Conditions: 150 mM KOAc, 10 mM MgCl2 and 150 mM bicine (pH 8.5), 24 C. An RNA of 207 nucleotides, treated with 2A3 and read out base by base. It was measured as part of the RMDB library M2RFPK. For 2A3 the reverse transcriptase was SuperScript II with manganese.
[RMDB]
RNA sequence: GGGAACGACUCGAGUAGAGUCGAAAAAGCCUGGUCGAUACGUCGACCAGGCAAUGCCGCCACAACGGCUUCCUGGCGUGGCGGAUCUCAUCCAAUGGAGCAACGCGCCGGAUACGUCCGGAGCGAAAAAAGCUCUGCUUCUUCGGAAGCAGAGCAACUGUUACCCUAACUUCGGUUAGGGUAACAGAAAAGAAACAACAACAACAAC
Reactivity to 2A3 in 0.01 (KOAc 150mM, MgCl2 10mM, bicine 150mM(pH8.5), 24C), signal-to-noise 1, nucleotides 027 to 156: a010g300c000c000u020g000g010u000c000g010a020u000a060c210g070u000c000g000a000c000c000a000g000g010c000a010a000u000g010c020c010g010c000c000a020c010a050a050c000g050g000c000u170u160c010c010u010g010g000c020g000u000g000g000c030g000g000a020u030c070u010c040a080u040c060c020a090a130u250g020g000a020g010c000a000a100c010g000c000g000c000c010g050g000a040u040a080c270g110u020c010c000g000g000a000g000c000g050a100a010a000a000a000a000g000c000u000c000u000g000c000u030u010c000u000u020c120g110g000a000a000g000c000a000g000a000g030c000a000a000